[RMDB]
RNA sequence: GGGAACGACUCGAGUAGAGUCGAAAAAAGUGAUGGUUUGGGUAACCAUUUCAUCUUUUCAUGUCAUAUAUCUCCUGCCUCUCACGGUUUCAUCUGUGAGAAGCUUCAAAGAACUGCAAUAGAAGUCUAAUUAGCAGGGUUUCGACCCUGCUAAUUAAAAAGAAACAACAACAACAAC
Reactivity to DMS in 0.01 (KOAc 150mM, MgCl2 10mM, bicine 150mM(pH8.5), 24C), signal-to-noise 3, nucleotides 027 to 126: a030a010g010u010g010a020u000g000g000u000u010u010g040g000g020u060a100a090c000c010a010u010u010u020c020a030u040c010u000u010u000u000c050a130u010g000u000c080a050u030a110u010a090u000c080u010c010c030u000g010c000c030u000c000u000c000a000c020g020g000u000u040u040c190a060u020c010u000g010u000g000a000g000a040a060g020c020u030u040c180a090a080a080g020a050a070c090u020g010c100a080a060u000a100g000a090a120g000u020c110
Reactivity to 2A3 in 0.01 (KOAc 150mM, MgCl2 10mM, bicine 150mM(pH8.5), 24C), signal-to-noise 3, nucleotides 027 to 126: a000a000g080u040g000a000u010g000g060u020u050u050g150g010g040u110a040a050c000c030a040u000u020u010c030a040u040c000u060u030u050u050c060a090u140g110u050c100a070u170a000u000a100u190c070u010c050c020u030g010c030c010u000c010u000c000a000c010g000g070u050u270u130c160a170u070c000u000g000u000g010a010g000a010a010g000c000u040u060c050a100a100a000g030a090a050c040u030g040c010a000a100u070a110g080a140a040g040u000c020